Notes: Structure probing data (2A3) for a 207-nucleotide construct.

RNA sequence: GGGAACGACUCGAGUAGAGUCGAAAACUAUCUCGUAAACGCUCUCUGCAAAAUACAACUGCCAAUAACAAGCAGUCGUCCUUUGUUCUCGCUGCCUAAGCGAGCGCACUAACAGGACCGUCGACCCGGUGAUGCUCUCUAUCCGGUAAGUCGGCGUGAGAAUUGAACGGUUCGCCGUUCAAUUCUCAAAAGAAACAACAACAACAAC
Reactivity to 2A3 in 0.01 (KOAc 150mM, MgCl2 10mM, bicine 150mM(pH8.5), 24C), signal-to-noise 2, nucleotides 027 to 156: c030u050a090u210c010u000c000g050u060a080a090a100c100g000c000u030c000u020c030u080g030c060a080a120a110a060u170a090c070a150a000c010u040g000c010c000a060a010u180a190a040c040a120a060g010c010a010g090u030c000g040u000c010c000u120u020u050g010u020u000c000u000c010g000c000u030g130c060c190u120a120a040g000c000g000a000g000c010g000c000a030c000u090a110a020c010a090g000g000a000c010c000g000u010c000g000a000c000c010c000g000g030u040g000a060u060g010c020u020c010u000c010u040a080u100c010c000g060g070u050a110a030g000u000c000g010g000c010g010u020